The data come from the RNA Mapping Database (RMDB), library OK1LIB. Chemical mapping of a 177-nucleotide RNA with 2A3 and DMS. The 2A3 profile rests on 864 reads. DMS adducts were read by reverse transcription with MarathonRT.
[RMDB]
RNA sequence: GGGAACGACUCGAGUAGAGUCGAAAACUUUAAACAGCUGUUUGCACAAGUUACGAAUCCACCAAUUGAUGCGUAUCGUGAAAAAAUCGUAACGAGUGAACUUUCUUAUUUAGGUGGCGAAGGUAACACCCUUCAGUACCUUCGGGUACUGAAGGGUAAAAGAAACAACAACAACAAC
Reactivity to 2A3 in 0.01 (KOAc 150mM, MgCl2 10mM, bicine 150mM(pH8.5), 24C), signal-to-noise 2, nucleotides 027 to 126: c050u030u120u240a080a130a000c100a050g050c010u080g000u190u060u300g040c020a000c020a070a020g000u010u030a040c000g110a060a050u020c000c010a020c000c050a080a040u050u240g060a020u060g000c030g120u180a110u300c070g000u030g050a100a000a000a040a040a010u150c030g000u000a000a100c030g000a040g040u170g050a030a030c000u080u200u040c000u020u110a150u090u040u140a040g000g010u000g000g000c000g020a000a000g110g000u030a000a000c000
Reactivity to DMS in 0.01 (KOAc 150mM, MgCl2 10mM, bicine 150mM(pH8.5), 24C), signal-to-noise 2, nucleotides 027 to 126: c000u000u030u020a050a080a040c160a130g030c020u010g000u000u010u010g000c050a030c030a060a140g000u000u010a030c000g000a040a090u020c030c020a060c070c020a100a090u040u010g000a020u000g000c000g010u060a080u010c090g000u000g000a000a060a070a060a070a080u000c000g010u020a070a070c020g000a100g010u010g020a070a040c220u000u000u020c020u000u000a110u020u000u000a060g000g010u010g000g000c130g000a050a070g000g010u000a060a050c080